[RMDB]
RNA sequence: GGGAACGACUCGAGUAGAGUCGAAAACAAAGUAUUAUUAAUGCAGUCAAUGAUUUAGACAAAUCACAUACAUUAGUCGGAUACAUAGACAAAGAAAUCCAUAUCAUUAAUGUAUCAGAUGUUAUAACGAACACGAUAGUUUCGACUAUCGUGUUCGAAAAGAAACAACAACAACAAC
Reactivity to DMS in 0.01 (KOAc 150mM, MgCl2 10mM, bicine 150mM(pH8.5), 24C), signal-to-noise 1, nucleotides 027 to 126: c010a100a060a130g030u000a040u000u020a090u000u020a030a030u000g040c140a060g020u000c230a120a090u000g000a080u000u000u000a070g010a120c130a040a040a010u000c000a080c130a090u000a090c040a000u000u000a010g000u000c180g000g000a010u000a040c060a010u020a010g000a010c230a080a040a030g000a040a070a100u000c130c020a030u000a090u000c020a090u000u000a000a060u000g000u000a000u000c050a070g000a030u000g000u000u000a130u020a030a120
Reactivity to 2A3 in 0.01 (KOAc 150mM, MgCl2 10mM, bicine 150mM(pH8.5), 24C), signal-to-noise 2, nucleotides 027 to 126: c020a000a210a000g080u060a070u300u010a080u060u120a170a010u090g020c010a000g050u020c050a030a060u100g140a100u060u020u140a060g070a100c020a000a070a000u110c040a080c000a020u110a060c000a020u020u040a040g040u000c070g000g000a000u040a040c020a020u100a080g040a040c090a030a190a020g030a040a150a010u010c010c010a080u060a030u130c040a000u000u050a090a040u020g020u000a030u050c050a000g020a050u030g020u110u080a130u090a040a100